[RMDB]
Chemical mapping of a 177-nucleotide RNA with 2A3 and DMS. Values cover nucleotides 27 to 126. The reactions ran in a buffer of 150 mM KOAc, 10 mM MgCl2 and 150 mM bicine (pH 8.5), at 24 C. Reactivities are rounded to 0.1 and cut off at 0 and 3.

RNA sequence: GGGAACGACUCGAGUAGAGUCGAAAAAUGAGACGGCUGAGUGUCGGGGGCAGAUCACGAAGGGCUGCGCUCACCAUCAGGAGGUCUGGACUUGGCUGUGAAAGACACAGGCCCUCAUGUACGUCCAUCCUUGCCAUAAAUUCGUUUAUGGCAAGGAAAAAGAAACAACAACAACAAC
Reactivity to 2A3 in 0.01 (KOAc 150mM, MgCl2 10mM, bicine 150mM(pH8.5), 24C), signal-to-noise 2, nucleotides 027 to 126: a000u070g010a020g030a050c190g040g010c010u030g030a060g170u010g020u030c040g000g010g000g110g010c020a030g020a120u110c030a010c080g060a090a040g000g000g000c010u060g030c070g070c050u070c040a120c020c030a120u190c070a010g080g040a020g020g000u050c040u080g010g050a040c020u070u110g040g000c000u000g000u060g070a140a070a010g000a000c000a000c010a060g000g000c000c000c000u000c010a010u040g010u050a030c040g060u000c000c010a020
Reactivity to DMS in 0.01 (KOAc 150mM, MgCl2 10mM, bicine 150mM(pH8.5), 24C), signal-to-noise 4, nucleotides 027 to 126: a040u000g010a020g000a090c180g010g000c010u010g020a130g040u010g000u000c020g010g030g010g010g000c050a030g000a070u000c080a060c090g010a250a100g000g000g020c010u000g010c090g010c050u010c060a080c070c060a090u010c110a060g010g000a220g000g000u000c030u010g000g000a150c090u010u000g010g010c040u010g020u010g020a080a060a070g020a040c020a020c010a300g000g000c020c010c010u000c030a020u000g010u000a100c230g000u000c010c010a160